[RMDB]
RNA sequence: GGGAACGACUCGAGUAGAGUCGAAAAAGUGGACGUUUAUUGUUCCCGAGCAUUGUUUGUUUUGUCCACGCUCGGGCUUCCUUCUGGCGAAAGCCAGUUCACAGGCAGCUAGCCGAACCCAGCACGUAGCAGCAACCUAGAGGCUAGCGCUACGCUAAUUACUAUGAUCAUUCGUGAUCAUAGUAAUAAAAGAAACAACAACAACAAC
Reactivity to DMS in 0.01 (KOAc 150mM, MgCl2 10mM, bicine 150mM(pH8.5), 24C), signal-to-noise 2, nucleotides 027 to 156: a080g010u000g000g020a030c020g020u000u000u000a030u010u020g000u000u000c000c000c010g010a150g020c080a100u000u000g010u000u000u010g000u000u000u000u000g070u010c000c020a040c010g000c010u000c030g080g020g000c030u020u000c030c000u000u000c040u000g000g010c000g010a160a110a260g010c000c020a010g020u000u010c070a080c110a110g000g020c060a160g010c070u010a100g010c030c020g000a090a110c020c010c030a300g010c060a120c050g030u000a050g020c020a180g030c020a050a060c030c020u000a170g030a300g020g030c000u000a100g040c030g000c010u000a020c040g000c070u000a100
Reactivity to 2A3 in 0.01 (KOAc 150mM, MgCl2 10mM, bicine 150mM(pH8.5), 24C), signal-to-noise 2, nucleotides 027 to 156: a000g000u020g000g020a050c070g030u060u160u130a200u190u190g040u060u020c000c020c010g020a020g040c070a090u040u110g080u080u080u120g050u020u090u120u070g000u000c000c010a020c040g000c040u010c000g060g000g000c000u000u010c010c000u000u110c000u030g000g000c010g040a100a020a000g000c000c030a000g000u140u210c120a100c010a040g000g030c010a020g010c030u080a040g030c000c020g020a040a050c010c000c020a030g020c050a010c040g000u030a000g030c110a020g000c020a030a060c000c010u100a100g050a130g140g000c040u040a010g030c020g000c020u010a010c010g000c030u020a060